The record gives the reactivity of an RNA of 177 nucleotides to 2A3 and DMS.
[RMDB]
RNA sequence: GGGAACGACUCGAGUAGAGUCGAAAAGAUAUGGAAGUACUUCCCUACCGAAUUCGUUGAAAUCGGAAACGAUGGAGAAUCGGUAGCAGUACUUCCUAAGUCAAACCAUCAGCUUCGGCUGAUGGAACUGUGUAAGGCGGUUCGCCGCCUUACACAGAAAAGAAACAACAACAACAAC
Reactivity to 2A3 in 0.01 (KOAc 150mM, MgCl2 10mM, bicine 150mM(pH8.5), 24C), signal-to-noise 1, nucleotides 027 to 126: g050a010u090a020u100g030g010a000a000g000u000a020c000u040u020c020c020c000u010a000c000c000g060a190a300u050u050c040g230u300u050g060a050a050a000u020c000g010g000a070a040a050c000g000a000u000g040g030a010g040a010a000u000c000g000g000u000a000g000c030a020g020u000a010c000u000u000c010c000u000a120a000g050u050c050a020a090a060c000c000a000u020c000a000g040c000u120u170c300g230g000c010u020g020a020u000g000g000a000a000
Reactivity to DMS in 0.01 (KOAc 150mM, MgCl2 10mM, bicine 150mM(pH8.5), 24C), signal-to-noise 1, nucleotides 027 to 126: g010a100u000a300u010g020g000a020a010g030u000a010c000u000u000c200c180c000u010a010c000c000g000a060a100u000u000c000g000u000u040g000a040a130a010u000c000g010g000a080a080a090c010g010a060u000g030g000a100g000a030a000u000c010g050g000u000a010g050c080a000g000u000a010c000u000u010c000c000u000a000a070g000u030c020a180a090a200c030c000a010u000c000a000g010c020u000u010c220g040g000c010u000g000a000u000g000g000a020a050